[RMDB]
RNA sequence: GGGAACGACUCGAGUAGAGUCGAAAAGAUAUGGAACCCAUCAAUUCAACAGCCCACGGAGAUCGGAAACGAUCUUUGGGACAUGAAUGUGGGUUCCUAAGUCAAAAGCACCUCUUCGGAGGUGCAAGCAUGCUUAUAUCUUCGGAUAUAAGCAUGCAAAAGAAACAACAACAACAAC
Reactivity to 2A3 in 0.01 (KOAc 150mM, MgCl2 10mM, bicine 150mM(pH8.5), 24C), signal-to-noise 3, nucleotides 027 to 126: g010a010u010a000u060g010g000a000a010c020c040c010a070u160c100a060a300u020u010c060a240a100c040a290g000c010c000c000a040c100g140g030a030g000a010u000c010g010g000a000a000a010c000g010a000u000c000u010u000u000g010g000g030a020c090a240u300g000a010a010u010g010u000g000g000g010u000u000c000c000u000a000a020g000u000c010a090a040a070a010g000c000a000c000c010u030c020u020u080c300g190g000a000g010g000u000g000c000a000a000
Reactivity to DMS in 0.01 (KOAc 150mM, MgCl2 10mM, bicine 150mM(pH8.5), 24C), signal-to-noise 4, nucleotides 027 to 126: g010a030u000a060u020g000g000a020a010c000c000c000a010u040c160a120a060u000u000c000a140a100c170a150g010c000c000c000a040c300g000g000a000g000a000u010c000g020g000a010a020a040c000g020a000u000c000u000u000u000g010g000g020a010c030a250u000g000a000a000u000g010u010g000g000g000u000u000c000c000u000a000a050g000u000c020a110a090a130a150g020c010a010c000c000u000c000u010u000c240g030g010a010g000g000u000g000c010a020a040